[RMDB]
RNA sequence: GGGAACGACUCGAGUAGAGUCGAAAAGCAUGCCGUAAUAUGCAUGCUAGCAUCGAUUACGGCGCGCCGCGGCUAGCGCAUUAAUCGUACGGCCGUAAUGCUAUAUAAUUACGUACGCGAUUAUAUAAUCUACUUGUAGUUUCGACUACAAGUAGAUAAAAGAAACAACAACAACAAC
Reactivity to 2A3 in 0.01 (KOAc 150mM, MgCl2 10mM, bicine 150mM(pH8.5), 24C), signal-to-noise 9, nucleotides 027 to 126: g030c020a040u100g000c010c000g020u020a010a020u100a050u170g040c050a020u130g100c020u030a040g010c010a020u060c060g170a010u030u010a010c010g000g010c020g000c010g000c020c030g050c030g040g020c080u090a060g050c020g000c040a050u060u120a030a030u050c030g020u040a060c050g040g010c010c000g010u010a020a010u030g000c070u050a050u030a030u040a300a080u060u030a020c020g010u010a010c040g020c010g030a010u050u040a050u030a020u030a150
Reactivity to DMS in 0.01 (KOAc 150mM, MgCl2 10mM, bicine 150mM(pH8.5), 24C), signal-to-noise 9, nucleotides 027 to 126: g010c030a040u000g010c000c030g000u000a060a030u010a070u000g010c060a070u010g010c110u010a070g010c040a070u010c140g010a050u000u000a030c030g000g010c000g020c060g010c030c070g010c080g000g010c060u000a100g010c030g010c100a100u010u000a020a040u000c030g010u000a080c080g010g000c060c030g010u000a020a020u000g000c180u010a100u010a070u010a060a020u000u000a040c020g010u010a050c070g010c030g010a020u000u000a020u010a070u000a080
Structure probing data (2A3 and DMS) for a 177-nucleotide construct. It was measured as part of the RMDB library OK2TRN. The reactions ran in a buffer of 150 mM KOAc, 10 mM MgCl2 and 150 mM bicine (pH 8.5), at 24 C. 2A3 adducts were read by reverse transcription with SuperScript II with manganese. For DMS, 32,572 sequencing reads were counted.